This 177-nucleotide RNA was probed chemically with DMS and 2A3. Reactivities are given for positions 27 through 126.

[RMDB]
RNA sequence: GGGAACGACUCGAGUAGAGUCGAAAACAGCUGGAUGAGUCGCCCAUCGAGUGGUGGCUCAAGAUGGGACACAUUUAUGGAACGCUGCGCGAUUUGGCCAGCCUGUACCACAGUGUGCCCGGCGUGGUGGCAUAUCGUUCUUCGGAACGAUAUGCCAAAAAGAAACAACAACAACAAC
Reactivity to DMS in 0.01 (KOAc 150mM, MgCl2 10mM, bicine 150mM(pH8.5), 24C), signal-to-noise 1, nucleotides 027 to 126: c080a080g010c000u000g030g000a170u000g010a010g030u000c010g000c000c030c000a160u000c180g000a160g010u030g030g030u000g010g030c000u000c000a010a050g000a110u030g010g020g000a040c020a020c000a020u000u000u000a050u000g010g000a090a060c090g000c020u000g040c260g000c020g010a280u010u000u000g000g010c020c000a020g010c050c060u000g040u000a090c000c010a060c180a030g010u000g000u010g010c020c000c030g000g000c030g000u010g040g010
Reactivity to 2A3 in 0.01 (KOAc 150mM, MgCl2 10mM, bicine 150mM(pH8.5), 24C), signal-to-noise 2, nucleotides 027 to 126: c000a020g020c030u050g160g050a120u050g000a060g000u020c000g000c020c020c030a190u230c160g040a030g130u300g000g030u010g000g000c000u000c000a020a030g060a020u210g000g020g150a010c000a000c000a010u070u120u170a050u100g040g000a010a030c050g000c000u090g000c030g060c030g300a300u080u110u290g210g000c010c000a000g000c030c000u050g140u050a030c030c000a020c030a000g000u010g000u020g060c020c000c020g030g000c050g000u040g010g130
Description:
2A3 adducts were read by reverse transcription with SuperScript II with manganese. For DMS the reverse transcriptase was MarathonRT. For 2A3, 1,129 sequencing reads were counted. The RNA was probed in 150 mM KOAc, 10 mM MgCl2 and 150 mM bicine (pH 8.5) at 24 C.